[RMDB]
An RNA of 177 nucleotides, treated with 2A3 and read out base by base. The 2A3 profile rests on 524 reads. For 2A3 the reverse transcriptase was SuperScript II with manganese. It was measured as part of the RMDB library OK1LIB. The RNA was probed in 150 mM KOAc, 10 mM MgCl2 and 150 mM bicine (pH 8.5) at 24 C.

RNA sequence: GGGAACGACUCGAGUAGAGUCGAAAACCAAGGGCAAUCAGUACCCUUAUCCUCACUUUAUUGUUGCCUUUGGGCCAAAUAUAGCGAAAUAGAUCUUUCAAGAUUUUCAGUUCCGAGAGGGUUGGGGCCUAUCGCUGGCGUUCGCGCCAGCGAUAGGAAAAGAAACAACAACAACAAC
Reactivity to 2A3 in 0.01 (KOAc 150mM, MgCl2 10mM, bicine 150mM(pH8.5), 24C), signal-to-noise 2, nucleotides 027 to 126: c000c000a020a000g000g010g000c010a020a110u110c020a300g210u140a130c040c020c060u000u020a040u010c000c020u030c040a060c110u200u170u090a160u190u270g030u020u000g000c000c000u000u050u000g000g020g010c000c000a000a060a000u300a060u050a140g160c050g060a060a040a000u080a040g010a000u000c020u010u300u160c130a110a020g000a020u040u030u050u070c020a020g040u080u000c060c020g100a100g000a010g120g000g020u040u000g010g010g010g000